Chemical mapping of a 177-nucleotide RNA with DMS and 2A3. It was measured as part of the RMDB library OK2TRN.
RNA sequence: GGGAACGACUCGAGUAGAGUCGAAAAGUGGUCCAGUCUCUAGACAAUGAUGGGGUCAAGAAACACACAGAGGCCAGGCGCAGUGGCUCACGCCUGUAAUCCCAGCACUUUGAGAGGCGAAGGUGGGGGUGACGUAUUAGUUCGCUAAUACGUCACCAAAAGAAACAACAACAACAAC
Reactivity to DMS in 0.01 (KOAc 150mM, MgCl2 10mM, bicine 150mM(pH8.5), 24C), signal-to-noise 2, nucleotides 027 to 126: g030u010g020g010u000c020c080a110g000u000c000u010c070u030a100g000a130c060a070a070u020g000a100u000g000g030g000g010u000c040a070a040g000a110a050a100c090a110c090a060c130a080g010a120g000g030c030c020a040g010g000c030g000c160a050g000u000g000g000c030u010c060a100c080g000c010c010u010g000u000a150a070u000c010c020c000a100g030c110a040c080u010u000u000g010a060g010a060g000g000c040g020a030a060g040g020u000g000g010g020
Reactivity to 2A3 in 0.01 (KOAc 150mM, MgCl2 10mM, bicine 150mM(pH8.5), 24C), signal-to-noise 1, nucleotides 027 to 126: g060u050g000g000u030c030c010a020g050u000c010u000c000u040a120g010a080c070a110a120u110g020a070u100g030g000g000g110u040c060a030a050g090a060a080a000c080a000c050a000c010a080g050a040g120g000c020c010a000g010g000c030g000c030a060g010u080g060g000c000u040c050a010c020g030c000c000u040g050u110a040a020u010c000c000c000a000g010c000a070c010u020u080u120g130a140g010a040g060g040c020g000a050a050g080g030u100g000g000g080
The DMS profile rests on 1,513 reads. The RNA was probed in 150 mM KOAc, 10 mM MgCl2 and 150 mM bicine (pH 8.5) at 24 C. For DMS the reverse transcriptase was MarathonRT.